[RMDB]
RNA sequence: GGGAACGACUCGAGUAGAGUCGAAAAAUAGCACAUUUCGCUUUAUUAUUAGGGGCAGCUUGUGUGGCUCUGGGUGGGUGCGACGAUUCUGUUUUCCAGCUUUGGCAAAUGUGUUGGCUGAGGUAGCAGAGGAAUAUGAGGAGGGGUACUGGAGAGCCUAUUAACUAAUGUUCGCAUUAGUUAAUAGAAAAGAAACAACAACAACAAC
Reactivity to DMS in 0.01 (KOAc 150mM, MgCl2 10mM, bicine 150mM(pH8.5), 24C), signal-to-noise 1, nucleotides 027 to 156: a090u000a030g030c020a060c040a070u010u000u000c070g000c090u000u000u000a060u020u000a120u000u020a140g020g010g020g040c030a070g030c090u010u000g020u000g030u010g020g020c020u010c050u020g020g000g050u010g000g000g000u000g000c030g000a050c020g010a180u000u000c030u000g030u000u010u000u000c020c020a130g010c090u000u010u000g020g010c020a020a100a070u010g020u000g030u010u000g000g010c040u010g000a030g020g020u000a080g050c020a130g020a110g000g000a080a090u000a070u000g040a090g000g020a090g010g000g050g010u000a050c070u000g040g010a090g020a090g000c130
Reactivity to 2A3 in 0.01 (KOAc 150mM, MgCl2 10mM, bicine 150mM(pH8.5), 24C), signal-to-noise 4, nucleotides 027 to 156: a000u140a010g000c020a030c000a090u040u100u110c120g020c030u220u140u100a150u170u050a120u080u210a130g010g020g010g020c050a040g030c060u100u060g030u010g030u040g110g010c010u010c050u050g030g000g080u190g020g000g010u070g030c060g030a010c040g020a030u090u030c010u040g050u050u040u080u050c020c010a020g000c060u100u140u200g030g000c020a030a110a140u170g060u030g010u100u080g050g000c020u020g020a040g110g010u050a000g040c020a000g010a010g030g040a060a030u200a100u180g010a030g020g020a050g000g000g000g010u030a060c080u040g040g010a030g000a000g020c000